Chemical mapping of a 177-nucleotide RNA with DMS and 2A3. The reactions ran in a buffer of 150 mM KOAc, 10 mM MgCl2 and 150 mM bicine (pH 8.5), at 24 C.

RNA sequence: GGGAACGACUCGAGUAGAGUCGAAAAUUAAAUGAUCUAGUACGGCCGCCACUGAAGGACGGGUCCUCUCCGAAAGGAGAGUUGAGUAGAGUGUGAGCAGGACCGGGUGCUAGUCACUGGUGAAAAAGGUUAAUACUGACUUCGGUCAGUAUUAACCAAAAGAAACAACAACAACAAC
Reactivity to DMS in 0.01 (KOAc 150mM, MgCl2 10mM, bicine 150mM(pH8.5), 24C), signal-to-noise 2, nucleotides 027 to 126: u000u010a080a110a080u000g000a020u020c030u000a020g040u010a070c030g020g030c010c020g000c040c010a040c030u010g000a110a160g000g020a060c040g000g000g010u000c070c000u000c000u000c000c010g000a100a050a190g000g000a000g000a020g020u010u010g010a190g000u000a070g000a100g010u000g000u010g000a100g020c010a100g000g010a090c150c020g030g020g010u000g020c010u000a010g000u000c010a030c080u010g020g000u010g000a050a100a020a120a100
Reactivity to 2A3 in 0.01 (KOAc 150mM, MgCl2 10mM, bicine 150mM(pH8.5), 24C), signal-to-noise 1, nucleotides 027 to 126: u110u040a060a040a080u120g020a040u150c020u020a010g010u010a010c040g030g060c020c000g000c010c000a050c020u040g000a110a000g040g060a070c020g000g000g030u020c020c000u000c000u000c010c010g110a090a000a010g010g040a000g040a000g030u010u010g000a010g020u060a070g020a000g010u140g010u020g010a100g010c010a060g000g060a040c010c030g020g010g050u030g010c010u010a020g020u040c000a020c100u070g270g000u170g180a100a020a000a000a000